[RMDB]
Notes
An RNA of 177 nucleotides, treated with DMS and 2A3 and read out base by base.
RNA sequence: GGGAACGACUCGAGUAGAGUCGAAAAGAGAUGAUCCUUACCCCAAAAGAAAUUAUACUUAGUUGGGUCAAAAUAGCUUUAAGGAUAGCUCCCAAACUAACUUGCACUAGACUGACUUGAAGGAUUAGUUUCGUAAUGUUUUCGAACAUUACGAAACAAAAGAAACAACAACAACAAC
Reactivity to DMS in 0.01 (KOAc 150mM, MgCl2 10mM, bicine 150mM(pH8.5), 24C), signal-to-noise 3, nucleotides 027 to 126: g000a110g020a120u000g000a040u000c010c010u010u000a200c080c010c010c060a070a090a100a100g010a110a110a140u010u020a100u010a080c040u000u000a050g030u000u000g000g020g010u020c100a040a030a090a090u010a030g000c090u000u010u000a050a060g020g000a070u000a060g030c060u000c000c040c040a050a080a160c080u000a030a050c110u000u000g030c140a100c040u000a090g000a170c090u000g010a070c070u000u020g000a040a060g010g010a070u010u000a090
Reactivity to 2A3 in 0.01 (KOAc 150mM, MgCl2 10mM, bicine 150mM(pH8.5), 24C), signal-to-noise 3, nucleotides 027 to 126: g050a000g000a030u160g010a030u020c010c000u000u060a060c010c030c000c030a050a090a020a010g080a030a130a030u300u130a130u100a190c060u040u020a020g020u070u060g020g010g000u020c000a010a040a060a130u090a040g020c010u110u150u190a070a010g070g050a110u070a070g000c000u040c000c000c030a080a100a030c010u040a010a020c010u020u100g000c020a020c060u010a050g040a080c020u070g010a030c010u090u110g080a040a010g080g020a020u060u100a030
Annotation:
The 2A3 profile rests on 2,077 reads. The RNA was probed in 150 mM KOAc, 10 mM MgCl2 and 150 mM bicine (pH 8.5) at 24 C. For DMS the reverse transcriptase was MarathonRT.